RNA sequence: GGGAACGACUCGAGUAGAGUCGAAAAGACAAAUGCAGCAUAUUAGGCUAAGCAGGAAAGGGACGGUAGCUCCUGGUGUCAGUUCAUACGGUGUGAUGCAUCUGGGUCGUGCACACAUGCACCCAAAGGACAGAAUAAGGUUCGCCUUAUUCUGUCCAAAAGAAACAACAACAACAAC
Reactivity to DMS in 0.01 (KOAc 150mM, MgCl2 10mM, bicine 150mM(pH8.5), 24C), signal-to-noise 4, nucleotides 027 to 126: g020a110c090a060a060a080u010g010c040a030g010c030a080u000a080u000u010a080g000g020c030u000a090a090g020c050a040g000g010a060a060a100g000g000g010a070c060g010g000u000a070g010c040u000c040c020u010g010g010u000g000u000c060a040g000u000u000c070a100u010a080c140g000g020u010g010u000g000a100u000g000c040a000u000c050u000g000g010g000u000c080g010u010g010c020a040c070a060c130a020u000g010c080a080c000c010c030a060a080a130
Reactivity to 2A3 in 0.01 (KOAc 150mM, MgCl2 10mM, bicine 150mM(pH8.5), 24C), signal-to-noise 3, nucleotides 027 to 126: g070a000c020a010a050a010u120g020c010a020g010c010a020u050a080u240u140a110g130g000c030u040a070a020g030c020a010g000g100a040a080a060g050g000g010a030c050g030g020u050a010g010c030u040c020c020u020g000g040u030g060u070c040a030g030u090u080c020a020u060a110c070g010g020u030g010u020g050a100u030g000c030a000u020c010u050g160g000g010u060c030g030u030g020c020a020c010a000c000a050u060g020c020a030c010c010c000a050a050a050

An RNA of 177 nucleotides, treated with DMS and 2A3 and read out base by base. Source: RMDB library M2PK90, as collected in RNAgym. The 2A3 profile rests on 4,892 reads. The reactions ran in a buffer of 150 mM KOAc, 10 mM MgCl2 and 150 mM bicine (pH 8.5), at 24 C. For DMS the reverse transcriptase was MarathonRT. For 2A3 the reverse transcriptase was SuperScript II with manganese.